[RMDB]
RNA sequence: GGGAACGACUCGAGUAGAGUCGAAAACGAAGGACUUUCGAGUCCUUCGACUUACCGAGAUAGAUCCUCGGUAUAAAUCUGGAACCCUUGGAAACAAGGGAAUGAACGGAAUCUUCGGAUUCCGUAACAGGUAAACUAGGUUCGCCUAGUUUACCUGAAAAGAAACAACAACAACAAC
Reactivity to DMS in 0.01 (KOAc 150mM, MgCl2 10mM, bicine 150mM(pH8.5), 24C), signal-to-noise 6, nucleotides 027 to 126: c020g010a020a010g010g000a010c000u000u000u020c170g020a020g020u000c000c000u000u010c000g000a060c130u000u000a000c000c000g000a020g000a180u010a130g000a150u010c080c000u010c010g000g010u000a000u010a040a090a100u010c120u010g010g010a130a110c000c000c000u000u010g000g000a170a100a200c000a010a000g000g000g000a040a020u020g010a140a040c000g000g000a010a010u000c000u000u000c170g030g010a020u000u000c000c000g010u000a020a110
Reactivity to 2A3 in 0.01 (KOAc 150mM, MgCl2 10mM, bicine 150mM(pH8.5), 24C), signal-to-noise 5, nucleotides 027 to 126: c020g000a000a000g010g020a000c010u030u080u160c250g050a040g000u000c000c010u000u000c000g000a000c000u010u020a000c000c000g010a000g010a040u180a070g130a070u060c010c000u010c010g010g000u000a010u020a010a010a000u040c060u110g150g100a110a140c000c000c000u000u000g020g000a030a040a020c010a010a000g000g000g050a010a030u060g020a010a000c000g000g010a000a010u000c000u040u050c220g100g000a000u000u010c000c000g000u000a010a020
Structure probing data (DMS and 2A3) for a 177-nucleotide construct. Values cover nucleotides 27 to 126. 2A3 adducts were read by reverse transcription with SuperScript II with manganese. For DMS, 8,689 sequencing reads were counted. The RNA was probed in 150 mM KOAc, 10 mM MgCl2 and 150 mM bicine (pH 8.5) at 24 C.